The record gives the reactivity of an RNA of 177 nucleotides to DMS and 2A3. The 2A3 profile rests on 567 reads. The RNA was probed in 150 mM KOAc, 10 mM MgCl2 and 150 mM bicine (pH 8.5) at 24 C. Values cover nucleotides 27 to 126.

[RMDB]
RNA sequence: GGGAACGACUCGAGUAGAGUCGAAAAGUCGCGUUGUUUGGGAAUGCAGCGCAAAGUAGGUGGUAAAUUCCAUCUAAAGCUAAAUAUUGGUGCGAGACCGAUAGCGAACAAGUACCGUGAGGGAAAGAUUACCGGGGCAGUUCGCUGCCCCGGUAAUAAAAGAAACAACAACAACAAC
Reactivity to DMS in 0.01 (KOAc 150mM, MgCl2 10mM, bicine 150mM(pH8.5), 24C), signal-to-noise 2, nucleotides 027 to 126: g020u000c080g010c130g010u010u010g000u000u000u050g010g070g000a120a070u020g010c010a130g000c000g100c060a030a120a110g000u000a000g000g000u000g000g000u000a120a080a120u060u040c020c000a030u000c000u030a080a080a110g000c040u030a070a070a110u030a080u000u020g010g000u000g010c300g080a080g020a160c050c040g020a110u010a010g000c030g000a120a220c120a040a000g020u000a210c050c010g000u030g000a150g020g040g000a000a050a030g000
Reactivity to 2A3 in 0.01 (KOAc 150mM, MgCl2 10mM, bicine 150mM(pH8.5), 24C), signal-to-noise 1, nucleotides 027 to 126: g080u030c020g020c000g030u010u000g030u000u020u180g070g000g000a020a110u020g000c030a010g010c000g010c050a010a000a000g090u030a020g000g000u020g020g000u060a050a160a030u200u000c030c020a010u020c000u010a090a040a000g080c050u110a010a270a000u220a150u060u100g050g000u010g010c160g000a020g100a030c000c000g070a060u050a050g080c020g030a030a000c040a120a000g020u020a060c000c030g000u030g050a090g080g010g000a090a010a030g120